[RMDB]
RNA sequence: GGGAACGACUCGAGUAGAGUCGAAAACGGCACGGUACGAUUCCGUGGGGGAAUUUCCCUAACGCUUAGUCCCUAUACCGUAAAGGCCAUUACUGUAUAGGGCGUUGCCAACUACGAAAGUGUCGGGCAUUUCCUCCUGAUUCGUCAGGAGGAAAUGAAAAGAAACAACAACAACAAC
Reactivity to 2A3 in 0.01 (KOAc 150mM, MgCl2 10mM, bicine 150mM(pH8.5), 24C), signal-to-noise 9, nucleotides 027 to 126: c030g140g030c010a000c020g010g020u180a080c130g060a110u140u060c010c000g000u030g010g010g010g010g050a080a180u040u070u050c000c000c010u030a090a030c040g030c180u140u240a040g070u100c000c000c000u000a000u000a000c000c010g000u000a020a020a010g120g010c030c010a030u010u030a000c000u000g000u010a000u000a000g010g000g000c000g000u000u010g000c000c000a000a000c010u010a000c000g050a120a000a000g000u000g000u010c040g000g000g000
Reactivity to DMS in 0.01 (KOAc 150mM, MgCl2 10mM, bicine 150mM(pH8.5), 24C), signal-to-noise 6, nucleotides 027 to 126: c110g020g020c030a010c010g000g000u000a060c270g010a210u040u020c010c010g000u000g010g000g000g000g020a120a110u000u010u000c000c000c010u010a070a090c200g010c130u020u030a120g010u010c000c000c000u000a000u000a000c010c060g000u000a000a030a090g010g010c140c150a140u010u000a000c010u000g000u000a000u000a010g000g000g000c000g000u000u020g000c000c000a090a020c000u000a000c010g000a010a120a000g000u000g000u000c050g000g000g020
An RNA of 177 nucleotides, treated with 2A3 and DMS and read out base by base. For DMS the reverse transcriptase was MarathonRT. For 2A3 the reverse transcriptase was SuperScript II with manganese. The reactions ran in a buffer of 150 mM KOAc, 10 mM MgCl2 and 150 mM bicine (pH 8.5), at 24 C. Reactivities are given for positions 27 through 126.